[RMDB]
RNA sequence: GGGAACGACUCGAGUAGAGUCGAAAACCCUUAGCAUUCGUGCUAAGGGAAAUAACGGUCGGCUCAUGCAGCUAGUCCAAAAUGCUGCUCGACCUUUUGGUAAAAUCUGGCCGUUCGCGGCCAGAAAUCAGGUAUUAACGUUCGCGUUAAUACCUGAAAAAGAAACAACAACAACAAC
Reactivity to DMS in 0.01 (KOAc 150mM, MgCl2 10mM, bicine 150mM(pH8.5), 24C), signal-to-noise 2, nucleotides 027 to 126: c010c000c000u010u010a010g010c010a010u000u020c220g030u000g010c010u010a000a000g000g000g000a010a010a020u000a060a060c130g000g010u000c000g000g010c090u010c170a070u010g000c000a000g010c000u000a120g010u020c060c060a060a080a100a120u010g000c010u000g010c000u000c010g000a030c010c000u000u000u000u000g020g010u010a060a050a110a120u010c010u000g000g000c000c020g020u000u010c190g020c000g010g000c000c000a000g000a010a040a080
Reactivity to 2A3 in 0.01 (KOAc 150mM, MgCl2 10mM, bicine 150mM(pH8.5), 24C), signal-to-noise 1, nucleotides 027 to 126: c010c000c000u000u000a000g000c000a030u040u010c210g110u060g000c030u000a000a000g030g000g020a040a170a010u150a060a020c040g000g020u030c000g010g000c070u020c300a030u230g000c000a000g030c000u050a020g120u100c050c000a010a030a030a040u180g000c000u000g000c010u030c000g000a000c000c000u010u120u060u080g030g000u100a070a030a020a110u020c000u010g000g010c000c000g010u020u030c230g000c020g070g000c000c000a000g010a000a000a000
An RNA of 177 nucleotides, treated with DMS and 2A3 and read out base by base. High DMS reactivity at an A or C suggests that its Watson-Crick edge is free. The reactions ran in a buffer of 150 mM KOAc, 10 mM MgCl2 and 150 mM bicine (pH 8.5), at 24 C. For 2A3, 1,654 sequencing reads were counted. It was measured as part of the RMDB library M2PK50.